[RMDB]
The data come from the RNA Mapping Database (RMDB), library OK2TST. This 177-nucleotide RNA was probed chemically with DMS. The DMS profile rests on 807 reads.
RNA sequence: GGGAACGACUCGAGUAGAGUCGAAAAAAUCAAUAAAGAUCGACAACCUGCAUGUGCGCACCUCAGCCCCUUGUUCCCUCGUGUCGCACCACGGCUAUUACAUCCUGGCUCAAUGCCCACCAGGGGACAUCGUUGACAGGUUCGCCUGUCAACGAUGAAAAGAAACAACAACAACAAC
Reactivity to DMS in 0.01 (KOAc 150mM, MgCl2 10mM, bicine 150mM(pH8.5), 24C), signal-to-noise 1, nucleotides 027 to 126: a120a060u020c050a120a060u010a150a150a140g020a040u000c050g000a060c070a020a100c070c040u000g000c060a110u010g020u000g000c040g000c030a090c020c060u020c040a110g000c010c000c020c050u000u020g000u000u000c020c010c010u010c160g000u000g000u010c160g000c070a080c030c140a050c050g010g030c020u010a070u000u020a090c110a060u010c100c030u000g000g000c060u010c060a140a070u020g000c040c020c020a080c060c070a010g000g000g000g000a170
DMS adducts were read by reverse transcription with MarathonRT. The RNA was probed in 150 mM KOAc, 10 mM MgCl2 and 150 mM bicine (pH 8.5) at 24 C.